[RMDB]
RNA sequence: GGGAACGACUCGAGUAGAGUCGAAAACGGACGGGAUUUUAGCCAGGUUGCACGUUUACCCAUUUCGUGCUGGGUCCUGGACCCAUUUAAGAUAAUAGAAAUAUUAUCGAUUUCUUUAACGUCCGGAGACCGUAGCAUAUUUCGAUAUGCUACGGUCAAAAGAAACAACAACAACAAC
Reactivity to DMS in 0.01 (KOAc 150mM, MgCl2 10mM, bicine 150mM(pH8.5), 24C), signal-to-noise 2, nucleotides 027 to 126: c000g000g000a010c010g020g000g020a170u010u000u000u020a170g000c010c020a040g000g020u010u000g010c000a020c020g000u000u010u000a080c120c030c120a130u000u000u000c020g020u000g000c010u000g020g040g000u010c020c000u000g010g000a150c020c040c050a100u030u000u000a100a190g000a010u000a000a000u000a010g000a140a080a140u000a000u000u000a010u000c000g010a200u000u010u000c040u000u000u000a100a160c030g000u000c000c000g010g000a190
Reactivity to 2A3 in 0.01 (KOAc 150mM, MgCl2 10mM, bicine 150mM(pH8.5), 24C), signal-to-noise 1, nucleotides 027 to 126: c010g020g000a010c030g000g010g070a090u050u200u060u220a060g050c010c010a010g030g010u120u090g000c000a000c000g000u040u100u160a200c000c000c040a020u040u080u010c020g000u000g000c010u080g020g210g060u090c000c000u000g000g050a080c010c010c000a030u120u160u020a050a020g000a000u020a010a000u010a000g010a000a080a010u020a000u010u020a000u000c000g020a020u010u090u030c050u030u150u040a130a020c020g000u000c000c000g010g000a040
The record gives the reactivity of an RNA of 177 nucleotides to DMS and 2A3. The data come from the RNA Mapping Database (RMDB), library OK2TRN. DMS (dimethyl sulfate) methylates the pairing face of unpaired adenines and cytosines.